[RMDB]
Structure probing data (DMS and 2A3) for a 177-nucleotide construct. The data come from the RNA Mapping Database (RMDB), library OK1LIB. For DMS the reverse transcriptase was MarathonRT.
RNA sequence: GGGAACGACUCGAGUAGAGUCGAAAAAGACUUGUCCUGGUGUCUACUGAGAGAGUAGAACCGGCACUAGAGCGUUAUCUAGCGAAUGGCGAGAGGAAUCAUCUUCUAGUGGUGCGACAGUCACCUAUCAAGUCAUGGGGUUCGCUCCAUGGCUUGAAAAAGAAACAACAACAACAAC
Reactivity to DMS in 0.01 (KOAc 150mM, MgCl2 10mM, bicine 150mM(pH8.5), 24C), signal-to-noise 8, nucleotides 027 to 126: a080g000a030c010u020u040g030u000c010c000u020g020g010u000g010u000c020u000a000c000u000g010a220g010a160g020a030g010u000a010g010a090a020c000c000g010g000c020a020c010u000a010g000a020g010c250g010u000u010a070u010c020u010a090g010c110g010a170a070u030g010g010c010g000a080g000a040g000g020a060a080u020c080a090u020c060u030u010c010u000a000g010u000g000g010u010g010c100g000a020c020a010g000u010c020a090c010c010u010a100
Reactivity to 2A3 in 0.01 (KOAc 150mM, MgCl2 10mM, bicine 150mM(pH8.5), 24C), signal-to-noise 9, nucleotides 027 to 126: a000g020a010c050u110u200g010u020c010c020u030g010g010u080g130u020c000u000a000c000u040g040a050g020a030g010a000g190u000a000g000a000a000c000c000g010g010c010a000c000u000a000g000a010g020c050g030u050u040a070u070c040u040a020g060c020g160a300a140u170g180g010c040g010a070g010a020g100g180a080a070u130c040a030u020c060u160u000c000u020a010g010u010g040g070u220g090c090g010a000c000a010g010u020c000a020c010c000u060a080

The RNA was probed in 150 mM KOAc, 10 mM MgCl2 and 150 mM bicine (pH 8.5) at 24 C.